[RMDB]
Structure probing data (2A3 and DMS) for a 177-nucleotide construct. As a SHAPE reagent, 2A3 marks flexible, mostly unpaired nucleotides at the ribose 2'-OH. The reactions ran in a buffer of 150 mM KOAc, 10 mM MgCl2 and 150 mM bicine (pH 8.5), at 24 C.
RNA sequence: GGGAACGACUCGAGUAGAGUCGAAAAGAUAUGGAUAUGUACGCAGCUUGGAUUUAUGUUCGGAAACGAACAUUGUCAGCUGGUACUGUAUCCUAAGUCAAAAGGGAAAUAGUUCGCUAUUUCCCAAGCUUAACUAAAGCUUCGGCUUUAGUUAAGCAAAAGAAACAACAACAACAAC
Reactivity to 2A3 in 0.01 (KOAc 150mM, MgCl2 10mM, bicine 150mM(pH8.5), 24C), signal-to-noise 3, nucleotides 027 to 126: g040a020u110a030u220g000g010a000u000a010u030g050u020a020c200g060c300a000g000c030u200u300g130g010a090u210u300u170a020u080g000u000u000c000g020g000a050a120a120c020g000a020a000c000a010u000u020g010u000c000a000g000c000u000g000g010u010a000c000u000g010u000a010u000c000c000u020a200a020g070u050c060a000a050a170a260g000g010g010a000a000a010u020a000g020u070u100c300g000c240u000a000u010u010u000c000c000c000a000a000
Reactivity to DMS in 0.01 (KOAc 150mM, MgCl2 10mM, bicine 150mM(pH8.5), 24C), signal-to-noise 3, nucleotides 027 to 126: g000a040u000a300u000g010g000a000u000a000u000g010u000a010c000g020c010a010g000c000u000u000g040g020a020u000u000u000a000u000g020u000u000c010g010g000a090a100a260c020g020a000a010c000a000u010u000g000u010c010a060g020c000u000g020g000u000a000c010u000g030u000a000u000c000c000u010a090a240g000u010c060a060a090a110a190g010g000g010a030a010a000u000a010g010u000u010c300g030c000u000a000u000u010u000c000c000c000a030a030